[RMDB]
RNA sequence: GGGAACGACUCGAGUAGAGUCGAAAAGCGAGCCGAGAGUGAGUGGGAGCGCGAAUGUGUGGCUUGAGUGUGCGGGCGUGGGGCGUGCAAGGCGAGCGCGUGUGCCCACCCUGAGCCCCUCCCGCCGUAACAUGAUGUCUUUCGAGACAUCAUGUUAAAAAGAAACAACAACAACAAC
Reactivity to DMS in 0.01 (KOAc 150mM, MgCl2 10mM, bicine 150mM(pH8.5), 24C), signal-to-noise 8, nucleotides 027 to 126: g010c060g010a100g010c040c030g010a100g010a090g020u000g010a100g010u000g000g000g000a080g010c090g010c050g010a080a060u020g010u010g020u010g010g010c050u000u000g000a090g010u020g010u020g010c020g000g000g010c300g000u010g000g000g000g020c010g020u020g010c070a060a060g010g010c080g000a090g000c030g020c100g000u010g010u030g020c010c010c030a090c050c010c010u010g000a150g000c000c000c010c010u000c000c000c010g010c030c070g010
Reactivity to 2A3 in 0.01 (KOAc 150mM, MgCl2 10mM, bicine 150mM(pH8.5), 24C), signal-to-noise 8, nucleotides 027 to 126: g040c010g010a010g020c000c020g060a050g000a010g080u100g020a020g010u060g020g020g000a050g010c060g000c030g090a100a100u100g050u020g020u050g040g010c000u040u040g040a050g080u130g060u110g030c010g000g020g000c090g050u100g010g010g010g000c030g010u060g040c050a060a040g060g030c030g050a030g030c030g000c040g020u190g080u120g070c010c000c000a030c010c000c010u020g020a010g000c010c000c000c000u000c000c000c010g000c000c000g010
This 177-nucleotide RNA was probed chemically with DMS and 2A3. The data come from the RNA Mapping Database (RMDB), libraries RFM100 and RFMREP. DMS adducts were read by reverse transcription with MarathonRT. 2A3 adducts were read by reverse transcription with SuperScript II with manganese. Reactivities are given for positions 27 through 126.